[RMDB]
RNA sequence: GGGAACGACUCGAGUAGAGUCGAAAAACUGUAGCUUAGCAUUGAAUUUCGGUAUUGUCUGUACAGGAUAGGUGGGAGACUGAGAAACUGGGCCGUCAGGUUCAGUGGAGUCGUCCUUGGGAUACCAUAAAGUGAAUAUAUUCGUAUAUUCACUUUAAAAAGAAACAACAACAACAAC
Reactivity to DMS in 0.01 (KOAc 150mM, MgCl2 10mM, bicine 150mM(pH8.5), 24C), signal-to-noise 9, nucleotides 027 to 126: a090c050u000g010u010a060g010c050u010u000a060g010c050a070u000u010g010a100a110u000u000u000c090g010g010u000a050u000u000g010u000c040u000g010u010a060c110a070g000g000a080u000a060g010g020u000g000g000g010a270g010a040c020u000g000a180g010a100a100a030c000u000g000g000g010c010c000g000u010c300a050g010g010u000u000c000a000g010u000g000g000a030g010u000c010g010u000c010c010u000u000g010g000g010a090u010a060c040c040a180
Reactivity to 2A3 in 0.01 (KOAc 150mM, MgCl2 10mM, bicine 150mM(pH8.5), 24C), signal-to-noise 6, nucleotides 027 to 126: a000c060u060g040u080a020g060c030u070u070a030g020c020a100u040u120g070a160a120u090u160u170c060g010g020u080a060u050u110g060u030c040u040g060u070a060c030a060g010g070a060u090a070g090g030u050g030g030g010a070g010a010c010u090g100a030g050a130a060a010c000u000g000g010g000c020c010g060u140c120a080g000g000u010u000c000a000g000u000g000g020a010g000u000c060g030u000c000c000u010u020g060g010g010a070u110a110c010c010a030